[RMDB]
Description:
This 207-nucleotide RNA was probed chemically with DMS and 2A3. Conditions: 150 mM KOAc, 10 mM MgCl2 and 150 mM bicine (pH 8.5), 24 C.

RNA sequence: GGGAACGACUCGAGUAGAGUCGAAAAUCAGAAUCAGGCCGGAGUGUUUAGCGCUCCGUAAACACGGUCGUACAGCCAGCCGGUAGCCUGGUUCCUUGCAUUGAGUGAUGUACGGAGUUUAUAGAGCAAAAGAAAGACCUGUUCGCAGGUCUUUCAACUCCUACUAACUGUUCGCAGUUAGUAGGAGAAAAGAAACAACAACAACAAC
Reactivity to DMS in 0.01 (KOAc 150mM, MgCl2 10mM, bicine 150mM(pH8.5), 24C), signal-to-noise 1, nucleotides 027 to 156: u000c050a050g010a070a040u000c010a050g000g030c010c030g010g000a100g020u000g000u010u000u010a150g030c020g020c000u030c000c000g010u000a020a050a130c080a050c020g030g010u000c020g020u000a130c100a190g030c060c010a100g100c010c000g020g000u000a040g010c120c000u000g040g020u000u010c000c050u000u000g030c120a110u000u000g010a170g020u000g010a080u000g000u000a050c020g010g010a130g020u010u000u000a170u000a100g000a110g070c050a050a080a060a140g020a020a050a020g010a020c000c000u000g030u000u010c210g050c000a030g050g020u000c000u000u010u010c010a030a080
Reactivity to 2A3 in 0.01 (KOAc 150mM, MgCl2 10mM, bicine 150mM(pH8.5), 24C), signal-to-noise 2, nucleotides 027 to 156: u100c000a010g020a000a000u010c000a000g000g000c000c010g020g000a020g010u060g030u100u190u230a150g050c010g000c000u010c000c000g010u020a010a020a000c120a010c040g040g000u080c050g040u160a090c030a080g030c050c020a000g020c020c010g000g010u030a020g000c000c000u000g020g000u000u000c010c010u040u070g010c010a090u030u060g060a060g080u100g040a070u050g020u010a040c050g040g020a050g030u070u100u050a140u110a070g050a010g000c060a050a030a080a050g010a000a000a000g000a000c000c010u000g020u020u060c150g010c040a000g000g000u030c000u000u000u010c000a000a000

2A3 adducts were read by reverse transcription with SuperScript II with manganese. For DMS, 2,655 sequencing reads were counted.